[RMDB]
RNA sequence: GGGAACGACUCGAGUAGAGUCGAAAAGUAUAGCAUGACUGGCUAUGCGUAUACGAUGAAUCAGCCAGGAAAGAAUCCGUUGUGCGAAAGCACUUCGGUAAUGCAUAAUCGGUUCGAGUACAGCCCGGUACGAGAACCGUUGUUAGUACGGGCUAGAAGGUAUUAUGGAUUUCGAUCCAUAAUACCUAAAAGAAACAACAACAACAAC
Reactivity to 2A3 in 0.01 (KOAc 150mM, MgCl2 10mM, bicine 150mM(pH8.5), 24C), signal-to-noise 2, nucleotides 027 to 156: g050u050a030u090a150g000c000a000u040g100a120c020u030g000g020c010u050a030u090g030c060g020u060a090u100a100c140g110a110u180g070a060a120u060c030a040g000c010c000a000g040g070a030a100a010g090a040a050u020c000c010g000u000u010g000u020g000c010g030a040a030a000g000c000a000c000u000u010c000g000g020u050a060a000u030g020c050a080u110a190a130u300c070g020g000u000u000c000g000a000g010u000a000c010a020g040c000c030c030g030g000u000a000c000g020a010g000a080a000c000c000g000u010u080g020u000u010a060g000u010a030c050g050g050g000c010u010a050g040a110
Reactivity to DMS in 0.01 (KOAc 150mM, MgCl2 10mM, bicine 150mM(pH8.5), 24C), signal-to-noise 3, nucleotides 027 to 156: g070u000a050u000a060g000c000a110u000g020a230c020u000g000g000c030u000a060u000g010c060g050u000a110u000a120c130g000a190u000g010a130a090u000c070a030g000c000c020a060g000g010a120a120a190g000a300a140u000c000c010g020u000u000g040u000g020c000g000a110a110a270g030c000a020c000u000u000c010g020g060u000a020a030u010g030c070a180u000a120a080u000c040g020g030u000u000c020g000a300g010u000a020c000a040g010c000c000c000g030g020u000a050c020g020a300g010a020a020c010c020g010u000u000g000u000u000a120g010u000a080c040g000g010g010c030u000a090g020a300